[RMDB]
RNA sequence: GGGAACGACUCGAGUAGAGUCGAAAAGAUAUGGACGAGUGGUGAGCUUGGAUUUAUCGAAUCAAGGAAAUGAUCGGAAACGAUCAUUUCCUUGAUUCGAUUGUCAGCUCCCACAUCGUCCUAAGUCGCUAUAAUCAUACUUCGGUAUGAUUAUAGCAAAAGAAACAACAACAACAAC
Reactivity to 2A3 in 0.01 (KOAc 150mM, MgCl2 10mM, bicine 150mM(pH8.5), 24C), signal-to-noise 1, nucleotides 027 to 126: g020a030u130a040u180g040g030a010c020g010a020g000u020g080g010u300g020a020g020c030u160u170g180g020a090u300u300u080a030u000c010g000a010a040u040c000a000a000g000g000a030a060a000u000g050a010u020c000g040g060a000a200a060c030g010a010u000c000a020u000u000u020c000c000u000u020g000a010u010u010c000g000a000u010u000g000u010c000a000g000c030u030c000c000c000a000c010a000u000c000g010u000c000c000u000a020a000g030u020c060
Reactivity to DMS in 0.01 (KOAc 150mM, MgCl2 10mM, bicine 150mM(pH8.5), 24C), signal-to-noise 4, nucleotides 027 to 126: g010a110u000a300u010g010g000a010c000g010a050g030u000g010g020u020g010a010g020c010u000u010g020g000a030u000u010u000a010u000c000g000a020a000u000c000a010a000g010g000a010a010a010u010g000a020u000c010g010g000a140a120a210c000g010a010u000c000a000u000u000u000c000c000u000u010g000a000u000u000c000g010a000u000u000g000u000c000a030g000c000u000c000c000c000a000c000a020u000c000g010u000c000c000u000a020a100g010u010c130